The record gives the reactivity of an RNA of 177 nucleotides to 2A3 and DMS.
RNA sequence: GGGAACGACUCGAGUAGAGUCGAAAAUCGACACAUCGGUGGCGCAGCUGCUUCAGCACAACGCCGAGGGCCACUUCAUCAUGACGCUGCAGUCGGCGCUCGGGUUGGAAGCGCCGAUCUCAACGGCCCGAUUAGGCACUUUCGAGUGCCUAAUCGGAAAAGAAACAACAACAACAAC
Reactivity to 2A3 in 0.01 (KOAc 150mM, MgCl2 10mM, bicine 150mM(pH8.5), 24C), signal-to-noise 3, nucleotides 027 to 126: u130c010g020a000c000a010c010a120u060c030g030g010u040g120g000c060g000c060a040g000c010u050g010c070u230u250c020a010g010c000a020c020a030a120c090g040c090c000g000a030g010g100g000c030c000a010c000u060u070c000a100u030c010a060u180g030a060c150g030c090u040g000c030a000g020u100c130g020g000c130g040c030u020c000g140g000g000u070u080g110g050a090a060g000c000g000c000c000g010a020u000c040u000c020a070a080c020g080g000c000
Reactivity to DMS in 0.01 (KOAc 150mM, MgCl2 10mM, bicine 150mM(pH8.5), 24C), signal-to-noise 2, nucleotides 027 to 126: u050c040g000a070c130a130c180a090u060c040g010g000u010g000g010c040g000c100a160g110c000u000g040c110u000u010c020a030g060c100a160c050a090a150c100g000c020c000g060a020g000g000g000c020c000a070c060u020u000c040a050u020c020a110u020g020a110c190g020c040u000g000c060a000g000u000c010g020g020c000g000c000u000c070g010g010g000u000u000g000g020a110a000g000c000g000c000c000g010a020u030c040u000c000a100a050c200g000g000c020
For 2A3 the reverse transcriptase was SuperScript II with manganese. The 2A3 profile rests on 1,300 reads. It was measured as part of the RMDB library OK1LIB. The RNA was probed in 150 mM KOAc, 10 mM MgCl2 and 150 mM bicine (pH 8.5) at 24 C.